[RMDB]
Description:
Chemical mapping of a 177-nucleotide RNA with DMS and 2A3. It was measured as part of the RMDB library OK1LIB. The 2A3 profile rests on 8,372 reads. The DMS profile rests on 5,804 reads. The RNA was probed in 150 mM KOAc, 10 mM MgCl2 and 150 mM bicine (pH 8.5) at 24 C.

RNA sequence: GGGAACGACUCGAGUAGAGUCGAAAACAAAGACGCAUACGAAAUACGGAGUGCACUCAUUUUCAGUCACUAAAUCAGUUGUCGCAUAAAUCCACUCCGUCAUGAUUAGUGACAGAUAUUAUUUGUCUACUGAUUACCUGUUCGCAGGUAAUCAGUAAAAAGAAACAACAACAACAAC
Reactivity to DMS in 0.01 (KOAc 150mM, MgCl2 10mM, bicine 150mM(pH8.5), 24C), signal-to-noise 4, nucleotides 027 to 126: c050a050a140a060g010a100c030g000c040a100u060a080c140g000a060a140a080u020a050c030g000g010a010g000u000g010c300a110c090u070c170a110u020u050u020u010c140a060g010u000c010a010c000u000a020a030a050u000c010a090g010u020u030g010u020c050g070c240a080u030a030a080a060u030c190c020a060c040u000c030c020g000u000c210a050u010g020a020u000u000a000g010u000g000a020c000a060g000a020u030a050u040u050a050u000u020u030g000u000c040
Reactivity to 2A3 in 0.01 (KOAc 150mM, MgCl2 10mM, bicine 150mM(pH8.5), 24C), signal-to-noise 9, nucleotides 027 to 126: c040a010a130a010g140a050c040g010c090a060u190a160c120g150a080a090a030u180a040c010g010g020a020g020u030g030c070a040c070u120c110a140u040u050u160u160c050a040g000u000c000a010c020u030a050a130a150u030c030a040g100u130u100g050u190c020g030c100a050u140a200a090a030u060c040c000a020c010u000c000c020g020u030c010a060u080g020a020u030u030a000g010u000g010a000c010a020g080a020u140a080u170u160a120u060u140u120g120u030c030